[RMDB]
RNA sequence: GGGAACGACUCGAGUAGAGUCGAAAAGGCGAUCACGUCACCGGGCUCGAACUCCUCCUGGCGGAACCGGUCGGCCAGCGCGGUGAGCGCGUCCUCGUCGUCGAAUCCGCGCAGCAGCGGCAGCUCGUUGAGUUAUUAAGUUCGCUUAAUAACUCAAAAAAGAAACAACAACAACAAC
Reactivity to 2A3 in 0.01 (KOAc 150mM, MgCl2 10mM, bicine 150mM(pH8.5), 24C), signal-to-noise 9, nucleotides 027 to 126: g040g000c020g020a060u090c050a030c130g040u010c020a010c060c020g000g040g000c020u030c060g060a100a050c030u030c020c000u020c010c010u030g030g000c020g020g000a040a060c030c010g030g060u060c030g020g010c010c010a050g010c020g000c010g020g040u110g050a100g070c030g000c000g030u090c010c040u090c030g100u030c010g010u010c000g010a050a040u010c010c000g000c010g000c010a020g000c010a010g010c010g040g000c010a020g010c010u020c040g060
Reactivity to DMS in 0.01 (KOAc 150mM, MgCl2 10mM, bicine 150mM(pH8.5), 24C), signal-to-noise 9, nucleotides 027 to 126: g010g010c000g000a080u010c080a090c100g010u010c030a070c050c030g010g000g010c040u000c060g000a090a110c070u010c030c020u000c060c030u000g010g010c040g010g010a070a080c100c030g010g020u000c040g010g000c030c060a100g010c020g010c010g000g010u010g000a190g000c030g010c040g010u010c090c080u010c100g010u010c040g010u010c030g000a140a140u010c010c000g000c010g010c030a120g010c070a080g010c060g010g010c070a070g010c040u000c060g020
Source: RMDB libraries RFM100 and RFMREP, as collected in RNAgym. This 177-nucleotide RNA was probed chemically with 2A3 and DMS. 2A3 adducts were read by reverse transcription with SuperScript II with manganese.